This 177-nucleotide RNA was probed chemically with DMS and 2A3. Values cover nucleotides 27 to 126. For 2A3, 962 sequencing reads were counted. The DMS profile rests on 1,250 reads. For DMS the reverse transcriptase was MarathonRT.
RNA sequence: GGGAACGACUCGAGUAGAGUCGAAAAGGCGUUUCUCCGGGGGUCUUGGACCUCUGGUACGCUAGCGAGUACGAGUCUUGCGUUACCAGCGCUGAUAGGACUUUCUCUGGUGAUAUAGGAGCGCAAACGCGACGACAAAAUUCGUUUUGUCGUCGCGAAAAGAAACAACAACAACAAC
Reactivity to DMS in 0.01 (KOAc 150mM, MgCl2 10mM, bicine 150mM(pH8.5), 24C), signal-to-noise 1, nucleotides 027 to 126: g010g010c020g020u000u010u000c070u000c010c000g030g010g000g010g000u000c010u030u040g050g000a030c080c000u000c000u010g000g000u000a020c100g040c000u000a050g010c130g010a110g000u000a080c220g010a110g000u000c010u000u000g000c030g000u000u000a090c130c140a200g010c090g000c040u010g000a180u020a030g020g010a030c040u010u010u000c050u000c040u010g010g010u000g010a120u010a170u010a060g000g000a060g000c010g010c020a060a120a160
Reactivity to 2A3 in 0.01 (KOAc 150mM, MgCl2 10mM, bicine 150mM(pH8.5), 24C), signal-to-noise 1, nucleotides 027 to 126: g010g000c000g000u000u050u010c070u000c010c020g000g000g000g000g000u000c040u140u210g150g050a020c000c000u010c000u020g010g030u020a010c000g000c000u020a000g120c030g030a060g070u120a110c130g000a040g070u100c010u040u010g040c010g050u090u050a110c040c030a010g000c010g050c050u080g000a130u120a080g030g030a010c000u160u170u020c040u000c010u040g000g020u040g090a040u060a010u080a140g040g010a020g050c010g060c020a050a030a050